RNA sequence: GGGAACGACUCGAGUAGAGUCGAAAAUAACUAUGACCCUCUUAAGGUAGCGUAAUACCUUGCCGCUUAAUUGGCGGCUUGCAUGAACGGAUUAACGACUCCCCCACUGUCCCCGGCCGGAAGCCGGUUACCGUGAUAAGUUCGCUUAUCACGGUAAAAAAGAAACAACAACAACAAC
Reactivity to 2A3 in 0.01 (KOAc 150mM, MgCl2 10mM, bicine 150mM(pH8.5), 24C), signal-to-noise 7, nucleotides 027 to 126: u050a020a020c090u090a060u220g080a130c000c010c010u050c050u080u130a040a020g010g030u030a020g050c060g110u090a090a050u030a130c000c000u000u040g000c000c000g000c030u100u120a150a060u190u230g020g000c000g000g000c000u000u060g010c010a050u070g060a070a010c050g070g020a070u070u140a090a030c030g140a130c010u040c000c010c000c010c000a040c030u030g040u060c000c040c010c000g020g010c020c030g120g020a070a020g000c000c000g000g000
Reactivity to DMS in 0.01 (KOAc 150mM, MgCl2 10mM, bicine 150mM(pH8.5), 24C), signal-to-noise 6, nucleotides 027 to 126: u030a090a120c130u010a100u010g010a130c040c020c010u010c110u020u020a040a030g010g020u010a020g020c180g000u020a080a090u010a030c040c010u000u000g010c000c000g000c010u010u020a110a130u020u020g020g010c000g010g010c000u010u010g010c110a060u000g000a080a070c080g030g010a080u010u020a080a100c110g000a070c030u000c010c000c010c030c010a070c090u010g000u010c030c050c010c010g010g000c020c050g020g000a110a160g010c020c010g010g010